[RMDB]
RNA sequence: GGGAACGACUCGAGUAGAGUCGAAAAUAACAGCGUCCUGGCGUGAAAACGUCAGGCAACUAGCAAUCACUGUAUGCUAGUUGCAUUGUGUUUUCACACAAUGACGCUGUUUAACAGUGAUUGAUACGAACAAGACGUAUUUCGAUAUGUCUUGUUCAAAAGAAACAACAACAACAAC
Reactivity to 2A3 in 0.01 (KOAc 150mM, MgCl2 10mM, bicine 150mM(pH8.5), 24C), signal-to-noise 8, nucleotides 027 to 126: u070a000a000c000a000g000c000g000u000c000c000u000g000g000c000g000u020g040a060a010a010a000c000g000u000c000a000g000g000c000a000a000c000u000a000g000c000a010a020u070c000a000c000u000g000u010a030u030g010c000u000a000g000u000u000g000c000a000u000u010g000u000g030u010u080u150u230c080a020c000a000c000a000a000u000g000a000c000g000c000u000g000u000u000u000a000a000c000a000g000u000g010a020u070u150g040a020u060a100c100
Reactivity to DMS in 0.01 (KOAc 150mM, MgCl2 10mM, bicine 150mM(pH8.5), 24C), signal-to-noise 7, nucleotides 027 to 126: u020a010a010c000a010g000c000g020u000c000c010u000g000g010c010g000u010g000a140a060a170a020c000g010u000c010a000g000g010c010a010a000c000u000a000g020c000a050a140u010c000a010c010u000g000u010a160u010g000c000u000a000g000u000u000g000c000a020u000u000g010u000g000u000u030u050u030c300a070c000a000c000a000a000u000g010a010c000g010c000u000g000u000u000u000a040a020c000a010g010u000g010a230u040u020g010a100u020a110c220